[RMDB]
RNA sequence: GGGAACGACUCGAGUAGAGUCGAAAAACGAAGUGAAGGAUAUCUACAGCAGGCUGAUCGUAGAUAGCGACGAGUGCACACCACCCGCGAUGUGCUCCGUGGUCGCCGACGGAUUCGAGGAACUGGUACUGCUGGGCGGUUGUAUCAGCAGCGGCGACUUACGGACCUGAUUCGUCAGGUCCGUAAGAAAAGAAACAACAACAACAAC
Reactivity to DMS in 0.01 (KOAc 150mM, MgCl2 10mM, bicine 150mM(pH8.5), 24C), signal-to-noise 1, nucleotides 027 to 156: a100c010g000a100a120g030u010g040a110a140g000g000a130u000a010u000c020u000a030c020a100g000c050a130g040g050c090u010g010a070u000c110g030u000a000g000a120u010a060g000c040g010a160c070g010a070g020u000g000c030a060c040a020c010c060a020c050c000c000g020c140g030a060u000g000u000g000c040u000c020c040g020u000g020g020u000c010g020c010c000g040a040c050g000g020a140u000u000c090g010a180g000g020a130a110c030u000g010g010u000a130c030u000g000c000u010g020g000g060c070g000g020u020u040g010u000a070u000c010a060g050c030a080g020c020g010g030c040g020a040
Reactivity to 2A3 in 0.01 (KOAc 150mM, MgCl2 10mM, bicine 150mM(pH8.5), 24C), signal-to-noise 1, nucleotides 027 to 156: a000c030g050a090a030g000u050g170a060a060g050g060a020u000a010u050c020u020a020c020a020g030c080a060g240g000c050u140g070a130u100c070g030u010a000g020a100u020a010g040c030g070a040c030g080a070g080u040g000c010a010c000a000c070c050a060c020c010c040g010c060g070a110u020g030u030g000c000u010c000c000g010u010g010g010u010c020g000c040c020g000a000c000g000g010a030u090u120c050g000a050g050g000a040a030c040u050g060g030u070a040c010u010g000c010u080g020g030g010c090g030g000u070u050g000u020a030u010c020a020g000c010a000g010c010g000g000c000g000a000